The record gives the reactivity of an RNA of 177 nucleotides to DMS and 2A3. 2A3 adducts were read by reverse transcription with SuperScript II with manganese. The data come from the RNA Mapping Database (RMDB), library OK2TST. The RNA was probed in 150 mM KOAc, 10 mM MgCl2 and 150 mM bicine (pH 8.5) at 24 C. Values cover nucleotides 27 to 126.
RNA sequence: GGGAACGACUCGAGUAGAGUCGAAAAUGACCGUGGGCCUCGCCAACAAUCCGGGGGCGCCCCUGCUCGCGGCGGUGGACUGCCCGGUGUUGCUCGACACCGGCCCCGAAAUCAUCAGCGGCAGUACUCCAGUACAGGAAUUCGUUCCUGUACUGGAAAAAGAAACAACAACAACAAC
Reactivity to DMS in 0.01 (KOAc 150mM, MgCl2 10mM, bicine 150mM(pH8.5), 24C), signal-to-noise 3, nucleotides 027 to 126: u010g000a100c060c020g030u010g020g000g010c020c170u000c030g020c110c030a060a080c110a130a070u000c090c050g000g010g020g020g020c110g020c080c020c030c020u000g010c000u000c050g020c090g000g000c080g010g040u000g010g000a140c060u000g000c140c020c000g000g000u000g000u000u010g010c170u010c160g000a120c030a030c030c050g000g010c030c020c020c030g010a060a080a070u010c100a050u000c070a070g030c060g010g000c040a050g000u010a090c170
Reactivity to 2A3 in 0.01 (KOAc 150mM, MgCl2 10mM, bicine 150mM(pH8.5), 24C), signal-to-noise 1, nucleotides 027 to 126: u050g030a020c000c040g050u100g000g010g020c000c010u030c050g090c060c030a060a080c030a080a100u130c110c040g000g020g000g010g000c070g040c000c000c000c020u020g010c000u010c050g000c040g000g040c010g020g010u080g030g010a070c060u090g010c000c000c010g010g000u000g000u000u030g090c130u080c110g020a010c010a020c020c000g050g000c000c000c000c000g050a100a050a020u100c050a030u020c020a020g010c030g030g000c000a000g040u030a070c010